[RMDB]
RNA sequence: GGGAACGACUCGAGUAGAGUCGAAAAGAUAUGGAGGUGUUGAAUGGCAUCUUCACACCUUGGAUUUAUUCCUCGGAAACGAGGAAUUGUCAGGUGUAGAAGAGUGCCAUUCAACACCUCCUAAGUCGUCAAGUAGUUAGUUCGCUAACUACUUGACAAAAGAAACAACAACAACAAC
Reactivity to DMS in 0.01 (KOAc 150mM, MgCl2 10mM, bicine 150mM(pH8.5), 24C), signal-to-noise 2, nucleotides 027 to 126: g010a070u000a300u020g020g000a010g010g030u010g010u010u000g020a020a010u000g020g000c000a090u000c000u000u000c000a040c010a010c000c020u010u020g020g000a030u000u030u000a010u000u000c000c000u020c000g000g000a070a100a170c010g030a020g000g000a000a000u000u000g000u010c000a040g010g010u000g000u000a090g020a010a020g000a050g000u000g020c010c000a020u000u000c000a020a010c000a000c000c000u010c000c000u000a000a050g000u010c100

The record gives the reactivity of an RNA of 177 nucleotides to DMS.
Conditions: 150 mM KOAc, 10 mM MgCl2 and 150 mM bicine (pH 8.5), 24 C.
For DMS, 2,953 sequencing reads were counted.